[RMDB]
RNA sequence: GGGAACGACUCGAGUAGAGUCGAAAAGGCGUAGUCUCAGCUCACUGCAAACUCCACCUCCUGGGCUCAAGCAAUCCUCCUGCCUCAGCCUCCCAAAUAGCUGGGAUUACAGGCAUGCGCCACCAUGUAAUCAAAGGUUGUUCGCAACCUUUGAUUAAAAAGAAACAACAACAACAAC
Reactivity to 2A3 in 0.01 (KOAc 150mM, MgCl2 10mM, bicine 150mM(pH8.5), 24C), signal-to-noise 1, nucleotides 027 to 126: g010g000c040g020u030a020g000u010c010u030c030a020g000c020u050c050a110c060u120g050c070a070a050a160c050u060c010c000a030c030c030u000c000c020u040g000g060g020c020u040c060a030a030g000c020a070a100u030c020c020u000c020c010u030g020c000c000u030c010a020g020c010c010u080c020c000c010a060a060a000u130a000g020c010u000g020g020g000a010u000u030a000c020a010g030g060c030a030u060g000c030g050c020c010a010c010c000a030u100g070
Reactivity to DMS in 0.01 (KOAc 150mM, MgCl2 10mM, bicine 150mM(pH8.5), 24C), signal-to-noise 5, nucleotides 027 to 126: g000g010c040g030u000a040g010u000c010u000c030a070g000c030u000c130a090c090u010g000c060a060a090a100c050u000c030c020a070c060c010u000c020c020u000g020g010g020c020u000c060a040a060g010c090a060a070u000c050c010u000c030c020u000g010c020c010u000c090a060g010c020c030u000c010c010c010a020a080a060u010a040g000c010u000g000g000g000a030u000u000a050c050a040g020g010c040a040u000g000c090g000c020c020a100c080c040a050u010g010

Source information:
An RNA of 177 nucleotides, treated with 2A3 and DMS and read out base by base. Conditions: 150 mM KOAc, 10 mM MgCl2 and 150 mM bicine (pH 8.5), 24 C. The 2A3 profile rests on 2,274 reads. The data come from the RNA Mapping Database (RMDB), library OK2TRN.